[RMDB]
RNA sequence: GGGAACGACUCGAGUAGAGUCGAAAACGCUAGCCGUCGAUGAGCCGCUUGCAUCUUGAGCCUCGGUGAUGACAGAUCUAUCCACCCCGGAUCUUCCGCGCAUGAGUGCUGCCAUCGCCGAACCGACGGCACGGUGAUGAUUCGUCAUCACCGUGCCAAAAGAAACAACAACAACAAC
Reactivity to 2A3 in 0.01 (KOAc 150mM, MgCl2 10mM, bicine 150mM(pH8.5), 24C), signal-to-noise 1, nucleotides 027 to 126: c060g000c020u000a030g030c010c000g020u050c020g090a130u060g050a040g040c060c000g050c060u010u070g020c060a120u080c040u070u100g110a010g050c000c010u040c000g000g000u030g020a020u010g000a000c010a040g000a030u030c030u100a110u090c090c000a030c040c020c010c060g010g010a040u020c000u170u000c040c020g040c000g000c060a040u110g080a040g120u150g000c060u040g000c000c020a040u040c030g020c000c000g000a010a000c020c010g030a030c020
Reactivity to DMS in 0.01 (KOAc 150mM, MgCl2 10mM, bicine 150mM(pH8.5), 24C), signal-to-noise 1, nucleotides 027 to 126: c070g030c060u000a070g030c050c010g010u000c020g010a150u010g000a170g010c110c160g020c040u000u000g000c170a120u000c120u010u010g000a070g040c070c060u010c000g000g020u030g000a040u010g020a010c030a010g000a050u010c080u000a110u020c100c150a120c070c050c070c010g000g000a060u000c080u000u010c020c060g000c160g010c130a160u010g000a080g000u000g010c030u000g000c020c000a030u000c010g000c020c020g010a080a100c020c040g000a050c090
Chemical mapping of a 177-nucleotide RNA with 2A3 and DMS.
DMS adducts were read by reverse transcription with MarathonRT.
The RNA was probed in 150 mM KOAc, 10 mM MgCl2 and 150 mM bicine (pH 8.5) at 24 C.
The DMS profile rests on 887 reads.